[RMDB]
RNA sequence: GGGAACGACUCGAGUAGAGUCGAAAAGGCAUCGGGUCCUCAGUAACGGACAGGGCAGUUUUGGCUACUGUUCUCAAUGAGAUUAGAGUCUCUUUGGAAGCUACAGAUAGGUUAUACUAGUCUGGUAGGGCUGCCAUAAUAGAAUACUGGGUGGAUACCAUUAGCAUUUAUUCGUAAAUGCUAAUGGAAAAGAAACAACAACAACAAC
Reactivity to 2A3 in 0.01 (KOAc 150mM, MgCl2 10mM, bicine 150mM(pH8.5), 24C), signal-to-noise 7, nucleotides 027 to 156: g040g010c020a060u070c080g040g020g050u040c010c000u030c030a020g010u070a080a040c080g000g030a020c030a050g020g000g000c020a040g010u010u070u190u200g120g000c050u150a190c020u100g030u050u000c030u010c020a050a100u090g000a010g010a020u050u190a110g040a050g130u020c000u010c000u060u020u020g040g010a050a010g030c010u030a060c010a010g020a040u040a010g030g050u180u100a080u040a170c010u030a030g200u020c010u020g100g030u070a070g010g060g040c010u010g010c010c000a030u100a140a040u090a070g090a080a040u070a100c040u030g020g050g000u060g030g030a030u070a110
Reactivity to DMS in 0.01 (KOAc 150mM, MgCl2 10mM, bicine 150mM(pH8.5), 24C), signal-to-noise 3, nucleotides 027 to 156: g010g010c040a090u010c060g010g020g010u010c030c010u000c020a030g030u000a100a130c080g010g020a060c030a050g020g000g010c010a090g020u000u000u000u000g030g010c030u000a060c020u000g020u000u000c020u000c050a040a100u010g000a050g020a080u000u000a150g020a260g000u000c020u000c020u000u000u000g000g000a060a050g000c010u000a060c020a040g000a060u000a050g010g010u010u000a210u000a130c010u010a050g030u000c010u000g000g010u000a060g040g030g010c010u000g000c000c020a040u000a050a110u020a070g000a110a100u010a060c030u000g000g000g000u010g000g000a160u010a130
This 207-nucleotide RNA was probed chemically with 2A3 and DMS. For DMS, 9,765 sequencing reads were counted. It was measured as part of the RMDB library OK3TST. Reactivities are given for positions 27 through 156. DMS adducts were read by reverse transcription with MarathonRT. 2A3 adducts were read by reverse transcription with SuperScript II with manganese.